[RMDB]
Annotation:
Chemical mapping of a 177-nucleotide RNA with DMS.

RNA sequence: GGGAACGACUCGAGUAGAGUCGAAAAUGGACCAGAAUGAGUGAGCACAUCUUCCAAAGACCCACAGGCCUUAAGCUUCCUGCAACCUUCCAGGCUGCCUUGAGGCAGGGGCUGGUCGAGGGAGUUAGGACGAACGACAGUUCGCUGUCGUUCGUCCAAAAGAAACAACAACAACAAC
Reactivity to DMS in 0.01 (KOAc 150mM, MgCl2 10mM, bicine 150mM(pH8.5), 24C), signal-to-noise 1, nucleotides 027 to 126: u000g030g000a070c060c050a080g040a090a070u000g000a070g020u000g000a050g010c060a160c100a040u000c010u000u000c010c000a030a050a150g000a050c040c000c160a130c170a160g000g000c000c010u000u000a030a070g000c010u000u000c030c040u010g010c150a100a090c190c110u020u010c160c070a060g000g000c080u000g000c120c050u000u010g010a020g030g060c050a100g000g000g020g000c140u040g000g000u000c000g000a300g010g010g000a030g010u000u000a000
It was measured as part of the RMDB library OK2TRN.